[RMDB]
RNA sequence: GGGAACGACUCGAGUAGAGUCGAAAAUUCGUUACUAUUAUAAUUAAAAUGGUCGAUGGCGGUUUGUCUCUGGAAAUCAGAGAGAAAGACUUGAAUAGGUAUAGGGAAUGCAUGUGAAUGCGUUCCGGAUGUGUAUGGAUUUCGAUCCAUACACAUCAAAAGAAACAACAACAACAAC
Reactivity to DMS in 0.01 (KOAc 150mM, MgCl2 10mM, bicine 150mM(pH8.5), 24C), signal-to-noise 6, nucleotides 027 to 126: u010u020c020g000u020u040a100c010u000a060u020u010a120u040a120a120u030u050a080a080a080a080u010g000g010u000c020g010a050u000g000g010c100g000g010u000u000u000g000u000c000u000c000u000g010g010a080a100a130u030c010a020g010a030g000a060g000a040a040a050g000a040c030u000u010g010a070a050u010a040g000g010u030a080u030a100g000g000g000a010a000u000g000c000a010u000g000u060g000a100a010u000g000c000g020u000u000c010c010g000
Reactivity to 2A3 in 0.01 (KOAc 150mM, MgCl2 10mM, bicine 150mM(pH8.5), 24C), signal-to-noise 9, nucleotides 027 to 126: u060u010c010g040u090u070a030c020u010a030u240u070a130u110a210a150u170u170a110a110a050a100u100g030g000u010c030g040a060u060g030g040c040g030g020u040u070u080g110u020c010u000c000u010g040g050a080a110a120u290c010a010g010a000g010a000g020a030a050a010g030a020c030u080u090g060a070a040u080a100g080g040u130a070u120a160g050g010g000a000a010u010g000c000a000u020g060u040g160a140a000u010g000c010g000u000u000c000c000g000